[RMDB]
RNA sequence: GGGAACGACUCGAGUAGAGUCGAAAACUGCGUACGCUUUCUCACAUUAGGAGAACACCAAUAUGACGAUUAAUUACCAGUUCGGGGACGUCGACGCUCAUGGCGCCAUGAUCCGCGCUCAGGCGGCCGGUGCAAUCGAAUUCGUUCGAUUGCACCGAAAAGAAACAACAACAACAAC
Reactivity to DMS in 0.01 (KOAc 150mM, MgCl2 10mM, bicine 150mM(pH8.5), 24C), signal-to-noise 2, nucleotides 027 to 126: c020u000g000c110g030u000a010c160g020c050u000u010u000c030u000c020a080c000a080u000u020a180g030g000a130g000a090a100c290a080c030c020a070a060u000a050u000g020a030c110g010a070u010u000a090a170u000u000a070c030c000a040g010u000u000c120g020g010g000g010a120c070g020u000c010g000a040c030g010c100u000c110a140u000g010g000c000g000c000c010a100u020g000a090u020c120c090g040c000g010c070u000c160a200g030g000c040g000g040c150
Reactivity to 2A3 in 0.01 (KOAc 150mM, MgCl2 10mM, bicine 150mM(pH8.5), 24C), signal-to-noise 1, nucleotides 027 to 126: c000u020g000c040g000u040a020c090g020c090u000u020u020c000u020c020a140c050a110u160u280a060g040g020a100g000a080a030c030a010c020c000a040a090u120a030u180g040a010c050g020a010u010u210a070a050u050u080a080c020c020a020g050u010u090c080g020g020g060g010a020c020g020u040c040g000a030c020g000c010u060c020a090u180g020g000c030g050c040c010a030u090g040a070u100c040c100g010c000g000c040u080c060a020g130g000c010g000g000c010